[RMDB]
RNA sequence: GGGAACGACUCGAGUAGAGUCGAAAAGACGAACGAAAACACAAAUGUUCCACGGUGCAGAAGGGUCCCACACAUGAGGAUCACCCAUGUAACUCGGACAGGAUAUGCUUUUGGGAAAAAGAGAGAACGAUCAUGGAGAAUUCGUUCUCCAUGAUCGAAAAGAAACAACAACAACAAC
Reactivity to DMS in 0.01 (KOAc 150mM, MgCl2 10mM, bicine 150mM(pH8.5), 24C), signal-to-noise 4, nucleotides 027 to 126: g010a120c050g010a110a150c050g010a060a030a080a020c070a060c100a050a160a080u000g000u000u000c010c050a100c130g010g020u000g030c030a050g010a120a110g000g000g010u000c020c010c050a090c190a060c150a040u000g020a090g010g010a060u000c070a050c030c010c020a100u010g010u000a050a050c070u000c140g020g010a070c020a050g010g010a060u010a070u000g000c040u010u000u000u000g020g010g000a040a010a040a060a070g000a100g010a110g000a080a120
Reactivity to 2A3 in 0.01 (KOAc 150mM, MgCl2 10mM, bicine 150mM(pH8.5), 24C), signal-to-noise 2, nucleotides 027 to 126: g070a020c060g030a110a000c020g020a000a000a080a000c070a000c020a020a080a050u090g010u150u040c020c000a030c060g040g000u050g000c000a000g030a050a060g050g020g010u010c000c050c000a050c020a000c010a140u140g070a110g080g000a040u060c040a120c070c000c000a000u050g020u040a070a040c010u010c040g020g000a000c030a030g080g010a060u020a030u230g020c060u010u020u070u070g100g010g030a000a140a000a070a000g110a010g000a000g010a040a010